This 207-nucleotide RNA was probed chemically with 2A3.
RNA sequence: GGGAACGACUCGAGUAGAGUCGAAAAAGAACCUGCACUACCUCUUCAGGCACGGGUUCGUGCGCCAGGCCUGCAAGAUCUCCAACGUGGAGCUGACCAACCUGGUCUCCUACAUGGGCAUCCUGCACGAGAACCGCCUGGGGCAGAACGUGCUGCAGGAACAGGGAAAAUUCGUUUUCCCUGUUCCAAAAGAAACAACAACAACAAC
Reactivity to 2A3 in 0.01 (KOAc 150mM, MgCl2 10mM, bicine 150mM(pH8.5), 24C), signal-to-noise 2, nucleotides 027 to 156: a000g110a050a070c020c060u050g050c070a040c030u110a080c060c020u040c030u110u150c120a030g010g010c020a020c140g190g010g030u050u020c040g040u110g000c010g070c000c000a010g000g010c050c050u030g000c010a020a050g000a130u050c010u000c040c050a140a200c150g040u050g020g020a090g000c130u110g040a060c010c010a120a140c040c130u120g010g000u040c010u000c010c000u030a040c040a110u110g010g010g030c000a020u070c000c020u000g000c010a040c090g080a100g040a100a030c070c010g000c040c000u000g000g010g080g010c000a000g010a030a000c030g000u000g000c000u020g020c010a020